[RMDB]
RNA sequence: GGGAACGACUCGAGUAGAGUCGAAAAUUGCAUGGUCUCCAGAAGGUUCCAUGCUUGUGCUUCCUGGUGGCCUCCACAAGGCAUCAGCUGACGACGACGGCGUCGAUGCCGCGUAUGUCUACGCUCGGCUUUGGCCAUAAUUCGUUAUGGCCAAAGCAAAAGAAACAACAACAACAAC
Reactivity to 2A3 in 0.01 (KOAc 150mM, MgCl2 10mM, bicine 150mM(pH8.5), 24C), signal-to-noise 3, nucleotides 027 to 126: u040u050g000c000a000u010g000g000u060c050u050c060c030a100g170a230a080g080g010u080u060c010c000a000u060g000c000u020u080g090u050g050c010u020u020c000c000u030g000g040u030g040g160c010c000u080c040c060a130c030a120a030g000g000c000a030u030c020a050g030c010u020g010a000c040g020a030c020g040a040c020g010g030c030g020u160c110g090a090u290g000c000c040g010c010g000u000a230u190g030u000c030u070a040c140g000c040u000c010g110
Reactivity to DMS in 0.01 (KOAc 150mM, MgCl2 10mM, bicine 150mM(pH8.5), 24C), signal-to-noise 3, nucleotides 027 to 126: u010u000g010c020a020u000g020g010u000c030u010c000c040a220g020a160a190g010g000u010u010c040c020a030u010g020c040u000u010g020u000g040c300u010u000c010c010u020g010g030u010g020g000c020c000u000c080c140a080c170a090a150g000g010c020a060u050c060a060g000c050u000g010a030c040g000a030c060g020a140c020g000g000c000g020u000c210g000a100u010g020c010c000g000c060g030u000a040u000g000u000c020u000a080c160g010c040u000c230g000
The data come from the RNA Mapping Database (RMDB), library OK2TST. An RNA of 177 nucleotides, treated with 2A3 and DMS and read out base by base. The DMS profile rests on 2,462 reads. For DMS the reverse transcriptase was MarathonRT.